[RMDB]
RNA sequence: GGGAACGACUCGAGUAGAGUCGAAAAGACGCCUUUAGAAGAAGAGGCUAGGGGGUAUUCCGGUGUGGGAUACUUAGUAAUAUGCAACGCUAAUUGCAUAAGAUUGUAGGAGGGAAUUUACAGUCUUUAGAGAUAAGCACGUUCGCGUGCUUAUCAAGCAUGCUCUUAGGUUCGCCUAAGAGCAUGCAAAAGAAACAACAACAACAAC
Reactivity to 2A3 in 0.01 (KOAc 150mM, MgCl2 10mM, bicine 150mM(pH8.5), 24C), signal-to-noise 3, nucleotides 027 to 156: g030a000c040g020c010c020u080u100u150a250g020a280a020g050a040a040g020a020g020g000c020u030a050g030g010g020g010g010u010a040u100u030c060c050g050g100u220g010u220g060g000g000a000u010a030c000u010u030a030g040u070a040a100u010a040u100g010c000a030a020c050g040c160u120a110a060u080u000g000c010a010u020a070a020g020a020u050u110g000u020a060g000g070a090g000g030g010a010a020u020u020u110a020c010a020g030u000c000u020u050u060a080g000a000g030a080u010a000a000g000c010a010c020g010u030u050c190g030c000g070u000g000c000u020u000a000u000c000a000a000

Notes
Chemical mapping of a 207-nucleotide RNA with 2A3. It was measured as part of the RMDB library M2RFPK. The 2A3 profile rests on 1,715 reads. 2A3 adducts were read by reverse transcription with SuperScript II with manganese. The RNA was probed in 150 mM KOAc, 10 mM MgCl2 and 150 mM bicine (pH 8.5) at 24 C.